[RMDB]
RNA sequence: GGGAACGACUCGAGUAGAGUCGAAAAGCCAGUCAGAGGGCGCUACCAUGCAAACUAGGGCUGGCUACUCUUGCACAGAAUCACCUUUCUAUAUUAACCAGUGCAAGAAGGGUUAUUAUACCAUUUAAAAAUCGUGAAUGCUUCGGCAUUCACGAAACACCCACCUUGACUUCGGUCAAGGUGGGUGAAAAGAAACAACAACAACAAC
Reactivity to 2A3 in 0.01 (KOAc 150mM, MgCl2 10mM, bicine 150mM(pH8.5), 24C), signal-to-noise 1, nucleotides 027 to 156: g000c000c000a010g000u010c010a000g000a000g060g010g000c010g000c030u140a300c080c190a130u120g000c000a020a060a060c000u020a010g020g030g030c000u000g000g000c000u000a010c000u000c000u000u000g030c020a020c010a020g080a050a100u070c030a100c050c010u150u180u050c160u130a070u000a020u080u020a010a010c010c000a040g000u000g000c000a000a010g000a000a000g040g000g000u000u000a010u070u050a030u010a040c000c030a050u090u190u300a050a230a020a000a010u000c010g000u000g000a020a000u010g000c030u060u090c230g060g010c000a000u000u000c000a000c010g000a000a000a000